Chemical mapping of a 177-nucleotide RNA with 2A3 and DMS. For DMS, 3,818 sequencing reads were counted.

[RMDB]
RNA sequence: GGGAACGACUCGAGUAGAGUCGAAAACUUGCCACAUUUAAGGUUACUAGGAAUCGAUUUGACUGAUGAUGGCAACUAAUCAAUAUCUUGGGGAAUCCUUGAUUUUUUUUUCUUAGGAAGAGAAAGCAAAUAGGUCUCAAUUCGUUGAGACCUAUUUAAAAGAAACAACAACAACAAC
Reactivity to 2A3 in 0.01 (KOAc 150mM, MgCl2 10mM, bicine 150mM(pH8.5), 24C), signal-to-noise 2, nucleotides 027 to 126: c020u010u030g000c000c000a040c000a040u070u080u140a140a040g040g010u060u090a050c050u160a060g160g240a120a100u160c070g070a100u110u080u150g040a020c030u040g000a010u000g020a050u010g030g030c010a020a010c040u120a090a010u140c040a100a070u050a050u190c030u040u010g030g020g030g190a100a110u120c010c000u000u020g070a100u080u020u020u070u050u000u020u050u000c010u020u010a110g100g010a000a000g020a000g000a040a010a000g050c020
Reactivity to DMS in 0.01 (KOAc 150mM, MgCl2 10mM, bicine 150mM(pH8.5), 24C), signal-to-noise 3, nucleotides 027 to 126: c190u000u000g010c010c020a070c050a030u000u000u010a130a120g010g010u010u000a050c120u010a090g020g010a090a050u010c130g000a130u010u010u010g000a040c050u000g000a040u000g010a150u000g000g010c010a040a040c100u010a080a080u010c030a050a080u010a070u010c010u000u010g010g010g000g020a130a100u010c030c010u000u000g000a010u000u000u000u000u000u000u000u000u000c020u010u010a120g010g010a070a040g010a020g000a020a020a080g000c150
High 2A3 reactivity points to a flexible backbone, as in loops and unpaired stretches.